Overview
An RNA of 177 nucleotides, treated with DMS and 2A3 and read out base by base. Reactivities are given for positions 27 through 126. High DMS reactivity at an A or C suggests that its Watson-Crick edge is free. The reactions ran in a buffer of 150 mM KOAc, 10 mM MgCl2 and 150 mM bicine (pH 8.5), at 24 C. The data come from the RNA Mapping Database (RMDB), library OK1LIB. 2A3 adducts were read by reverse transcription with SuperScript II with manganese.
[RMDB]
RNA sequence: GGGAACGACUCGAGUAGAGUCGAAAACGAUGUAGCGCGCGCUGUGCUCCAUUGCGCGUUGGGAAUUGGCGAUACUCGUCGGUCAUGUAGCGGGUGGCCGCGUCAUUUAUCGACUGGCUGGAUUCGCAGAUUCUCUCGGGUUCGCCCGAGAGAAUCUAAAAGAAACAACAACAACAAC
Reactivity to DMS in 0.01 (KOAc 150mM, MgCl2 10mM, bicine 150mM(pH8.5), 24C), signal-to-noise 1, nucleotides 027 to 126: c020g000a110u020g020u060a030g050c000g000c030g000c030g030c170u020g000u040g000c100u040c090c020a030u030u030g000c020g010c060g060u060u000g010g020g000a050a080u060u020g000g010c000g020a180u030a140c010u000c240g000u010c020g040g000u010c150a080u050g000u010a120g000c000g000g010g000u050g000g000c010c000g030c060g010u010c080a100u000u060u020a060u060c180g000a000c050u000g000g030c020u020g000g000a230u030u000c030g000c030
Reactivity to 2A3 in 0.01 (KOAc 150mM, MgCl2 10mM, bicine 150mM(pH8.5), 24C), signal-to-noise 2, nucleotides 027 to 126: c000g030a030u110g060u220a030g010c020g000c000g000c010g000c060u020g110u180g000c090u080c040c000a020u020u030g010c000g000c000g000u020u040g000g010g040a030a060u090u040g040g000c030g000a000u020a110c050u020c080g070u020c020g060g030u000c010a000u040g040u050a020g000c040g000g030g050u120g170g090c050c000g050c000g050u060c010a030u100u100u100a170u100c060g010a040c000u000g030g000c010u090g000g020a050u070u030c040g000c050